This 177-nucleotide RNA was probed chemically with DMS and 2A3. For DMS, 1,008 sequencing reads were counted. The RNA was probed in 150 mM KOAc, 10 mM MgCl2 and 150 mM bicine (pH 8.5) at 24 C.
RNA sequence: GGGAACGACUCGAGUAGAGUCGAAAAGAUAUGGAACGUGUCGACGGUAAUACCAUAUGGUCGGAAACGACCACAUGGUGCCAGUCGUCACGUUCCUAAGUCAAACCCACAAGUUCGCUUGUGGGAAGUGAGGCAACAAGUUCGCUUGUUGCCUCACAAAAGAAACAACAACAACAAC
Reactivity to DMS in 0.01 (KOAc 150mM, MgCl2 10mM, bicine 150mM(pH8.5), 24C), signal-to-noise 1, nucleotides 027 to 126: g030a090u000a300u000g000g000a000a030c010g020u000g000u000c000g050a030c030g020g000u000a090a100u010a110c000c000a000u000a000u000g000g010u020c000g010g000a070a090a300c000g020a020c010c000a000c040a000u000g000g000u000g000c040c020a080g000u000c000g020u020c000a000c000g010u000u000c000c020u000a010a060g000u000c040a150a140a300c040c000c000a010c020a020a020g000u000u010c240g000c000u000u010g030u000g000g000g010a030a030
Reactivity to 2A3 in 0.01 (KOAc 150mM, MgCl2 10mM, bicine 150mM(pH8.5), 24C), signal-to-noise 1, nucleotides 027 to 126: g020a020u080a030u110g000g020a010a000c010g000u020g000u030c020g000a010c050g000g050u210a200a080u170a300c000c000a000u000a040u020g000g000u000c010g080g020a070a050a030c010g000a000c010c000a010c000a020u000g030g020u030g070c000c040a090g030u020c020g000u000c000a010c000g000u000u000c000c000u000a000a020g010u010c000a000a050a150c000c040c000a000c000a000a020g100u130u220c300g020c240u030u020g000u010g050g010g030a020a030